[RMDB]
RNA sequence: GGGAACGACUCGAGUAGAGUCGAAAAGUAGAUGCACUAGAAGAAAUGAAAUCAGGCUAGCACAAGUGAUUGUUCACUAUUGUGUCUAGCAAAAGACUGAAGGUCCGUGUUGGGGCUGAAAUCCAACCUUCAUUCCGUAAUUCGUUACGGAAUGAAGAAAAGAAACAACAACAACAAC
Reactivity to DMS in 0.01 (KOAc 150mM, MgCl2 10mM, bicine 150mM(pH8.5), 24C), signal-to-noise 5, nucleotides 027 to 126: g010u010a080g020a090u000g030c060a040c050u000a070g000a120a090g010a070a090a080u010g000a070a070a120u010c050a070g010g000c000u000a010g010c000a010c010a030a030g010u000g000a040u020u010g000u010u000c010a010c000u010a110u000u000g010u000g010u000c010u000a000g010c000a040a030a080a090g010a280c030u000g010a100a160g010g000u000c030c050g000u000g010u000u000g000g010g000g010c050u000g000a040a050a100u000c010c030a030a090c150
Reactivity to 2A3 in 0.01 (KOAc 150mM, MgCl2 10mM, bicine 150mM(pH8.5), 24C), signal-to-noise 3, nucleotides 027 to 126: g030u050a020g010a070u060g020c050a030c070u050a040g050a120a010g030a040a220a070u130g040a050a040a050u080c040a030g160g000c000u000a000g010c000a010c000a010a020g000u000g010a060u240u280g100u280u060c000a000c010u070a180u150u050g010u010g050u030c000u000a000g000c000a000a000a000a000g010a010c030u040g030a040a020g070g010u020c030c030g040u030g030u080u030g030g000g030g010c060u040g010a030a020a010u000c010c000a010a020c020